[RMDB]
RNA sequence: GGGAACGACUCGAGUAGAGUCGAAAAUGAGAGGUGCCUGGAGCGCCUGCAGGCAUCUCUGUUUUCAAAAUGGCGCAUACCAGUCUUCAAGGUCAAAACAUUAUAUUGAUUUGGCAACUGAGUAUAACGUGCUUACUUUAUUCGUAAAGUAAGCACGAAAAGAAACAACAACAACAAC
Reactivity to 2A3 in 0.01 (KOAc 150mM, MgCl2 10mM, bicine 150mM(pH8.5), 24C), signal-to-noise 7, nucleotides 027 to 126: u240g010a020g000a000g020g000u000g010c000c000u010g000g010a080g010c000g000c010c000u010g000c000a000g000g010c000a010u000c000u000c000u010g060u020u150u030u090c050a020a020a010a070u130g000g000c000g000c000a000u010a000c000c000a010g030u040c050u110u100c190a120a050g130g000u000c010a000a020a040a030c010a050u170u230a150u180a080u250u100g060a080u030u000u020g000g000c010a030a020c020u000g000a010g080u020a030u010a070a010
Reactivity to DMS in 0.01 (KOAc 150mM, MgCl2 10mM, bicine 150mM(pH8.5), 24C), signal-to-noise 3, nucleotides 027 to 126: u030g010a010g000a020g010g020u000g010c000c000u030g010g010a170g000c000g010c000c010u000g010c000a010g000g000c000a000u000c010u010c000u010g020u000u000u000u010c120a050a070a050a090u000g010g010c000g020c010a130u000a020c010c000a020g010u010c180u010u010c080a040a070g000g040u000c000a020a010a050a090c120a070u030u050a130u010a090u000u000g010a060u000u000u010g010g010c130a070a040c010u000g000a080g010u000a000u000a100a150